[RMDB]
RNA sequence: GGGAACGACUCGAGUAGAGUCGAAAAAAUAGCGGGUCAAGGUACAACGCAGAGAGAUAGGCUCUUCCCAAGUUCUCUUCGGAGUACCAAGACUUCGGUACAGAAGAGAUACCGACUCUUCAUAGAAGUACAGAGUAGACUUCGGUCUACUCUGUACAAAAGAAACAACAACAACAAC
Reactivity to DMS in 0.01 (KOAc 150mM, MgCl2 10mM, bicine 150mM(pH8.5), 24C), signal-to-noise 2, nucleotides 027 to 126: a020a060u020a060g010c110g010g000g000u000c000a040a300g000g020u000a020c020a050a260c030g000c100a050g010a020g000a040g020a160u000a110g000g000c220u000c120u000u020c030c020c030a080a130g010u010u000c010u010c000u000u000c000g000g020a300g040u000a010c000c010a040a240g010a040c030u000u010c040g000g000u000a030c160a250g000a010a000g000a000g000a050u020a080c040c010g000a120c010u000c010u000u000c020a120u010a070g030a040a140
Reactivity to 2A3 in 0.01 (KOAc 150mM, MgCl2 10mM, bicine 150mM(pH8.5), 24C), signal-to-noise 1, nucleotides 027 to 126: a000a010u180a020g060c070g010g040g000u010c010a050a040g010g000u040a030c000a030a020c020g000c030a000g000a010g000a010g000a040u050a150g100g000c030u030c020u140u080c000c000c010a000a030g040u050u010c010u010c000u000u000c010g030g000a030g000u000a000c010c000a000a020g020a010c020u080u040c020g010g050u050a050c030a060g020a020a000g000a020g000a010u060a090c000c010g070a040c010u000c020u060u000c010a020u100a130g180a190a020

Chemical mapping of a 177-nucleotide RNA with DMS and 2A3. Source: RMDB library M2PK90, as collected in RNAgym.